Structure probing data (2A3 and DMS) for a 177-nucleotide construct. The reactions ran in a buffer of 150 mM KOAc, 10 mM MgCl2 and 150 mM bicine (pH 8.5), at 24 C. 2A3 adducts were read by reverse transcription with SuperScript II with manganese. The 2A3 profile rests on 1,057 reads.

[RMDB]
RNA sequence: GGGAACGACUCGAGUAGAGUCGAAAAUGGAUGUCUUUAGGGAAUGAUUUAAUGUGUUUAUACAUGCUUGCGUCUAUUACACCAAUCAUAUGUGUAAUUGUUGUAAACGGAGCUAAAAUAGGCGUUACUGAGAGUGACAUUUCGAUGUCACUCUCAGAAAAGAAACAACAACAACAAC
Reactivity to 2A3 in 0.01 (KOAc 150mM, MgCl2 10mM, bicine 150mM(pH8.5), 24C), signal-to-noise 2, nucleotides 027 to 126: u100g020g020a040u060g020u100c040u040u140u100a110g000g020g080a090a060u060g080a070u090u030u300a170a000u130g070u000g040u030u140u050a060u020a040c060a020u040g010c020u000u070g120c000g030u000c020u000a050u010u070a040c030a010c020c020a070a030u150c050a090u090a080u300g090u010g030u010a020a050u020u060g020u000u030g030u080a040a010a000c020g000g000a020g000c010u010a010a100a000a050u080a010g050g000c020g000u000u020a060
Reactivity to DMS in 0.01 (KOAc 150mM, MgCl2 10mM, bicine 150mM(pH8.5), 24C), signal-to-noise 2, nucleotides 027 to 126: u010g000g000a070u000g030u000c050u000u000u000a080g000g010g010a070a050u010g010a100u010u010u010a060a000u010g020u010g020u000u000u020a060u000a080c160a090u010g010c040u010u000g000c030g030u000c080u000a210u000u000a000c030a040c000c150a130a110u010c180a100u010a150u020g020u030g000u030a020a020u000u010g010u000u000g000u010a010a040a050c020g000g000a020g010c000u020a030a070a050a040u000a050g000g000c020g010u010u020a120
Notes
Reactivities are given for positions 27 through 126. The DMS profile rests on 1,602 reads.